[RMDB]
RNA sequence: GGGAACGACUCGAGUAGAGUCGAAAAGAGUAAAUAGAGGAGUCAGGGUUCGCACCGGCUCCGCGAACCUAGGGUAACACUGACUCUGGAGCGUAAGAGAGAGCAGACGAAGAUACGUCUGCAUAGAGCACCUCAUACCUUUCGAGGUAUGAGGUGCAAAAGAAACAACAACAACAAC
Reactivity to DMS in 0.01 (KOAc 150mM, MgCl2 10mM, bicine 150mM(pH8.5), 24C), signal-to-noise 2, nucleotides 027 to 126: g000a050g050u020a030a050a140u040a080g000a220g020g020a000g000u000c050a060g000g000g010u000u000c000g000c010a130c160c050g000g030c030u020c020c210g000c000g000a000a000c030c000u020a040g030g000g000u090a050a130c080a300c050u000g000a020c000u000c000u020g000g040a050g020c030g000u000a050a060g010a160g000a190g000a130g000c000a000g000a000c010g000a130a130g030a300u070a140c020g020u020c000u000g060c000a020u020a000g000a300
Reactivity to 2A3 in 0.01 (KOAc 150mM, MgCl2 10mM, bicine 150mM(pH8.5), 24C), signal-to-noise 1, nucleotides 027 to 126: g060a000g020u180a080a040a160u230a070g080a010g080g000a050g010u040c070a070g000g010g000u030u010c060g000c000a020c090c050g110g000c010u000c000c050g000c000g000a000a000c000c000u070a020g000g000g150u000a110a010c050a000c190u020g010a000c000u000c020u010g010g000a050g010c020g020u150a120a050g030a000g020a000g000a030g190c000a000g000a010c030g020a040a050g060a240u250a130c000g000u010c000u000g000c000a000u000a000g060a000